[RMDB]
RNA sequence: GGGAACGACUCGAGUAGAGUCGAAAAUCUGGGUGUGCUACUGCUGGCCCGCCCGUUCCAAGUUGCGUAGUGGACCGCCUGGGGCUUAUGCGAAAGCUGGGUCUCACGGUCCAUAAUGUGGCAGGCACAGUAACAGAGACUUCGGUCUCUGUUACUGAAAAGAAACAACAACAACAAC
Reactivity to DMS in 0.01 (KOAc 150mM, MgCl2 10mM, bicine 150mM(pH8.5), 24C), signal-to-noise 1, nucleotides 027 to 126: u020c080u020g010g010g010u000g020u000g000c030u010a050c190u000g010c240u010g010g000c020c040c000g000c010c010c010g000u020u000c010c030a120a090g030u000u000g000c060g010u010a230g040u000g000g030a040c010c000g000c130c250u010g000g050g010g000c020u000u020a010u020g000c000g000a110a100a100g020c000u000g000g000g000u000c000u010c000a030c020g000g000u010c000c000a000u000a000a050u000g020u000g000g010c020a110g010g010c190a200